The record gives the reactivity of an RNA of 177 nucleotides to DMS. For DMS, 640 sequencing reads were counted. For DMS the reverse transcriptase was MarathonRT. Conditions: 150 mM KOAc, 10 mM MgCl2 and 150 mM bicine (pH 8.5), 24 C. It was measured as part of the RMDB library M2PK90.
RNA sequence: GGGAACGACUCGAGUAGAGUCGAAAAGGGUUUGGAUUACAUGAAUAGUAACAUGAGCAGAAGUAAACAGAACAAGAAGUACUGCGGUUAUUCAAGUUCAAAGUUCACACUAUCGCAAUAAAGGGAAAGUUGCUACCGUAUUCGUACGGUAGCAACUAAAAGAAACAACAACAACAAC
Reactivity to DMS in 0.01 (KOAc 150mM, MgCl2 10mM, bicine 150mM(pH8.5), 24C), signal-to-noise 1, nucleotides 027 to 126: g000g020g000u000u020u020g000g020a070u000u020a090c090a100u000g020a090a110u000a060g000u010a060a080c080a070u000g000a130g020c020a080g020a050a080g000u010a090a090a080c090a090g020a000a000c050a040a220g000a010a020g000u000a070c020u000g020c070g030g010u020u000a060u000u000c040a010a300g000u000u000c020a090a030a120g000u000u000c000a030c080a090c050u010a100u000c050g000c050a030a030u030a020a020a080g020g000g000a090a070